[RMDB]
RNA sequence: GGGAACGACUCGAGUAGAGUCGAAAAGUUAGGUGAGGCUCCUAUGCAAACACAGGCCACUGCCCAAAAAUGUCCAAAGACGCCAAUGGGUAGAACAGGGAUUGUCGUAUUAAGGCUUUCCAUAAUGAAAACAAAGUAUGCUUCGGCAUACUUUGAACAAUAUCCACAUGUUCGCAUGUGGAUAUUGAAAAGAAACAACAACAACAAC
Reactivity to 2A3 in 0.01 (KOAc 150mM, MgCl2 10mM, bicine 150mM(pH8.5), 24C), signal-to-noise 4, nucleotides 027 to 156: g010u040u040a020g020g030u040g050a060g010g040c010u070c040c020u070a060u150g080c070a090a100a010c050a020c030a100g050g020c030c010a020c010u010g000c000c000c020a000a020a010a010a020u020g000u000c020c020a180a100a110g020a000c000g000c000c020a030a030u010g000g010g020u000a020g020a040a050c070a040g000g070g020a010u020u020g030u030c020g020u080a140u130u160a200a040g020g000c000u010u020u010c000c000a040u120a150a120u170g110a010a080a010a030c000a000a010a000g000u000a010u000g000c010u040u080c140g060g000c000a000u010a000c010u000u000u000g000a010a000
Reactivity to DMS in 0.01 (KOAc 150mM, MgCl2 10mM, bicine 150mM(pH8.5), 24C), signal-to-noise 3, nucleotides 027 to 156: g030u010u010a040g030g030u000g010a090g000g020c030u000c030c020u000a110u000g010c070a070a100a110c050a040c070a130g010g010c000c010a110c040u000g040c010c010c010a000a030a080a100a100u010g040u010c030c040a080a060a170g020a060c030g000c030c050a070a230u000g010g010g020u000a020g010a050a190c120a140g000g000g000a060u000u000g010u000c020g000u010a130u010u010a130a120g010g000c040u000u000u010c000c030a100u010a110a030u010g000a110a110a090a150c000a000a010a040g000u000a000u010g000c000u000u000c300g080g000c000a010u000a020c010u010u010u000g000a060a100